[RMDB]
RNA sequence: GGGAACGACUCGAGUAGAGUCGAAAAGCAGAGCCAGGGAAAGUGCAUCGGAAGCUUUUGCAGCGGCUCUGGAUCGCUGAUCGAGGCUUCAAAGCUCCACGCGGGGUAUACGCCCCAUCCAAAAAGACCAUAAUCCGAUAUUCGUAUCGGAUUAUGGAAAAGAAACAACAACAACAAC
Reactivity to DMS in 0.01 (KOAc 150mM, MgCl2 10mM, bicine 150mM(pH8.5), 24C), signal-to-noise 4, nucleotides 027 to 126: g000c060a040g000a080g000c010c030a080g000g020g010a030a040a070g020u020g000c100a100u020c140g000g000a060a070g000c020u000u000u010u020g000c030a030g020c040g010g000c030u020c110u020g000g000a070u000c000g020c000u000g010a100u040c080g010a020g010g020c020u010u000c060a090a070a090g020c040u000c040c020a050c140g040c110g000g000g000g010u000a080u050a100c240g010c050c010c010c030a110u010c060c060a040a050a070a110a050g010a220
Reactivity to 2A3 in 0.01 (KOAc 150mM, MgCl2 10mM, bicine 150mM(pH8.5), 24C), signal-to-noise 9, nucleotides 027 to 126: g030c020a020g010a010g030c010c030a050g030g020g040a060a070a040g100u090g040c030a070u080c070g060g030a040a020g010c020u040u050u100u180g040c040a030g030c010g030g000c020u030c070u110g040g080a070u030c020g000c050u030g010a070u110c060g040a030g040g000c000u050u030c030a050a040a010g010c000u000c030c010a080c040g070c080g000g020g000g010u070a130u040a190c100g040c000c010c000c010a020u030c010c010a020a070a050a050a010g110a080